RNA sequence: GGGAACGACUCGAGUAGAGUCGAAAACUUUGGGCCGGGUAAUGCUUACGUCACAGAAGCAAAACGUCAGGUCAGCCAACGUUUGGACGGUGCCGCGAUAGAUAUGCCAGCGGGCCCAUCUGAAGUAAUGACUAAAUCGGUUCGCCGAUUUAGUCAUAAAAGAAACAACAACAACAAC
Reactivity to 2A3 in 0.01 (KOAc 150mM, MgCl2 10mM, bicine 150mM(pH8.5), 24C), signal-to-noise 2, nucleotides 027 to 126: c030u120u080u070g010g020g020c000c000g100g010g000u060a040a030u210g040c000u030u050a080c030g000u020c040a030c030a070g080a100a000g050c070a000a000a000a000c020g060u040c080a120g060g060u010c030a020g150c020c000a000a030c030g020u020u070u050g040g030a020c000g010g050u020g050c000c000g050c040g040a020u010a060g050a030u080a060u210g080c040c010a130g250c070g020g080g000c000c000c020a040u040c050u070g020a060a010g000u190a080
Reactivity to DMS in 0.01 (KOAc 150mM, MgCl2 10mM, bicine 150mM(pH8.5), 24C), signal-to-noise 2, nucleotides 027 to 126: c060u000u020u000g020g000g010c000c030g010g000g010u000a040a090u000g010c020u000u000a080c030g020u000c120a070c080a100g000a110a120g000c040a100a040a060a030c030g010u000c120a140g020g000u010c190a100g010c030c000a230a020c040g000u000u010u010g010g020a300c150g020g020u000g020c010c010g010c030g010a070u010a040g000a110u000a030u010g010c030c020a120g020c050g010g000g030c000c020c020a030u000c120u000g020a070a100g020u000a060